[RMDB]
RNA sequence: GGGAACGACUCGAGUAGAGUCGAAAACGCGUUGACAGUCCCGCUUGAGGCGUUUGUUAUGCGCGCCUUGCCCAAAAUGCCAUUUGAUACCAUAAUUAGGUACUUUUUGGUAUUUAUGGAGAUGAGCCGUUCAUCCACCAUUCGUGGUGGAUGAACGAAAAGAAACAACAACAACAAC
Reactivity to DMS in 0.01 (KOAc 150mM, MgCl2 10mM, bicine 150mM(pH8.5), 24C), signal-to-noise 1, nucleotides 027 to 126: c080g020c070g030u000u010g000a070c020a090g020u000c040c050c010g020c160u000u010g030a070g010g020c100g030u010u030u000g000u000u000a020u010g040c020g030c010g000c000c010u000u000g010c020c000c000a060a040a030a020u030g000c000c010a020u010u000u000g000a100u000a000c000c000a070u000a120a160u000u000a110g010g000u000a020c050u000u010u000u010u010g030g020u010a010u000u000u000a060u010g020g010a090g000a150u010g000a090g040c100
Source: RMDB library OK2TST, as collected in RNAgym. Chemical mapping of a 177-nucleotide RNA with DMS. The RNA was probed in 150 mM KOAc, 10 mM MgCl2 and 150 mM bicine (pH 8.5) at 24 C. For DMS the reverse transcriptase was MarathonRT.